Record summary
This 207-nucleotide RNA was probed chemically with 2A3. For 2A3, 369 sequencing reads were counted. The data come from the RNA Mapping Database (RMDB), library OK3TST. 2A3 adducts were read by reverse transcription with SuperScript II with manganese. The reactions ran in a buffer of 150 mM KOAc, 10 mM MgCl2 and 150 mM bicine (pH 8.5), at 24 C.
[RMDB]
RNA sequence: GGGAACGACUCGAGUAGAGUCGAAAAUGUCAUACAAAUGGAAUCAAACAGUGUGCAGUCUUCUUUGUCUGGCUUCUUUCACUUACAUACUGCUUUUAAGAUUCAUCCGGCCAGGUGCAGUGGCUCACGCCUGUAAUCUCAGCAUUUUGGGAGGCCAGGUUUUACGGGUAUUCGUACCCGUAAAACCAAAAGAAACAACAACAACAAC
Reactivity to 2A3 in 0.01 (KOAc 150mM, MgCl2 10mM, bicine 150mM(pH8.5), 24C), signal-to-noise 1, nucleotides 027 to 156: u060g020u110c000a030u070a290c050a020a080a030u220g080g010a070a110u150c140a180a050a140c060a070g040u070g000u000g060c030a080g050u030c110u110u040c000u000u190u160g010u000c000u000g000g010c000u130u030c000u120u170u090c060a050c030u110u200a030c030a080u170a090c030u080g200c020u070u220u030u040a050a010g000a130u080u070c000a050u140c190c010g000g000c020c020a000g000g030u000g040c010a010g010u000g020g020c000u000c030a050c070g000c000c030u000g000u090a070a060u000c100u000c010a030g060c130a160u070u140u250u100g040g030g000a050g110g000c020c030a030